Structure probing data (DMS and 2A3) for a 177-nucleotide construct. Reactivities are rounded to 0.1 and cut off at 0 and 3. For DMS the reverse transcriptase was MarathonRT. The data come from the RNA Mapping Database (RMDB), library TTRDEL. For 2A3, 1,916 sequencing reads were counted.
RNA sequence: GGGAACGACUCGAGUAGAGUCGAAAAGAUAUGGAUGCCAUCGAGGUGAAUGAUGACCUCGGAAACGAGCAAGUUCCCUCGAGUGGCAUCCUAAGUCAAAACUCUUACGGCUUCGGCCGUAAGAGAACACCAAGGAAGCGUUCGCGCUUCCUUGGUGAAAAGAAACAACAACAACAAC
Reactivity to DMS in 0.01 (KOAc 150mM, MgCl2 10mM, bicine 150mM(pH8.5), 24C), signal-to-noise 2, nucleotides 027 to 126: g030a050u020a300u000g000g000a000u010g000c010c010a070u000c000g000a040g010g020u000g020a010a000u000g000a150u000g010a060c300c000u000c000g010g000a060a060a130c010g000a020g010c030a050a130g000u000u000c000c000c000u000c000g000a020g010u000g020g000c000a000u000c010c000u000a010a110g000u030c050a110a090a120a080c010u000c000u000u000a000c010g000g000c000u000u000c210g020g020c000c000g020u000a000a030g000a000g020a020a080
Reactivity to 2A3 in 0.01 (KOAc 150mM, MgCl2 10mM, bicine 150mM(pH8.5), 24C), signal-to-noise 2, nucleotides 027 to 126: g040a020u050a040u220g010g000a010u010g030c030c000a000u000c020g010a010g010g100u300g090a040a040u150g200a180u170g050a050c010c020u040c050g010g000a010a060a010c010g000a000g020c010a060a270g020u020u000c040c040c010u010c020g030a090g170u110g000g000c000a010u000c000c000u000a000a010g010u030c000a010a040a030a190c010u030c030u000u010a000c000g010g020c000u000u140c290g170g000c060c000g000u000a000a000g000a010g010a000a000